[RMDB]
RNA sequence: GGGAACGACUCGAGUAGAGUCGAAAAUGCUCUCGGGACAGUAUCUAGUAAUUCGACAGCGGCAACUCAAGCUAGCCCAUGCGUUUGGACGGCAUACUGCGUAGCUAUUUUCAUGUCUUCAUUAUGCCGGGGCCAAAUGAUUCGUCAUUUGGCCCCGAAAAGAAACAACAACAACAAC
Reactivity to DMS in 0.01 (KOAc 150mM, MgCl2 10mM, bicine 150mM(pH8.5), 24C), signal-to-noise 1, nucleotides 027 to 126: u000g000c100u000c100u000c120g000g080g000a000c010a100g000u020a080u010c000u000a230g000u040a020a020u020u000c070g000a030c120a130g040c030g000g000c020a040a000c060u000c020a000a160g020c020u000a100g000c000c000c000a120u100g000c000g010u010u000u000g000g000a080c150g000g040c100a050u000a040c040u000g000c060g030u000a110g000c070u000a090u030u170u000u000c090a060u050g000u030c070u000u000c000a130u030u010a110u000g000c200
Reactivity to 2A3 in 0.01 (KOAc 150mM, MgCl2 10mM, bicine 150mM(pH8.5), 24C), signal-to-noise 3, nucleotides 027 to 126: u110g040c010u000c030u060c010g030g000g000a010c000a030g090u050a090u010c030u100a040g080u110a200a090u030u080c020g020a000c040a010g000c000g090g000c000a020a000c070u060c130a020a070g020c060u040a040g020c050c020c000a070u090g010c010g060u000u060u130g010g060a040c030g030g010c000a030u060a070c000u040g050c080g100u040a000g000c040u040a030u120u060u010u110c070a050u080g000u000c000u050u030c060a070u110u100a080u170g040c020